[RMDB]
Structure probing data (2A3) for a 207-nucleotide construct.
RNA sequence: GGGAACGACUCGAGUAGAGUCGAAAAACGAUCGCUACAACGCGCUAAGCAAUGGAGAUGAUUCUUGAGGGAAGCAAUUCUGCAGAGACAUCUCCACCCUGGGGUGGCGUCGCCAGAAUACACCGACCCGUUACAGGGAAAUUGGCUACUUGGCUGGGCCAAUCUGGAAGUUCGCUUCCAGAUUGGCAAAAGAAACAACAACAACAAC
Reactivity to 2A3 in 0.01 (KOAc 150mM, MgCl2 10mM, bicine 150mM(pH8.5), 24C), signal-to-noise 1, nucleotides 027 to 156: a000c090g030a100u100c000g020c030u180a080c050a200a080c190g040c000g000c000u030a080a020g090c010a030a200u110g030g000a030g000a000u000g060a100u010u010c000u000u010g010a190g010g010g000a040a000g080c090a000a300u060u040c000u020g060c050a000g030a010g000a010c000a000u000c000u020c000c000a000c020c000c000u030g000g000g010g020u000g040g000c070g040u090c030g000c020c010a040g130a100a090u160a070c000a000c060c040g130a110c000c000c000g090u160u100a040c030a030g090g000g040a000a000a150u080u050g080g000c000u020a010c050u190u060g050g000c020u030g020g080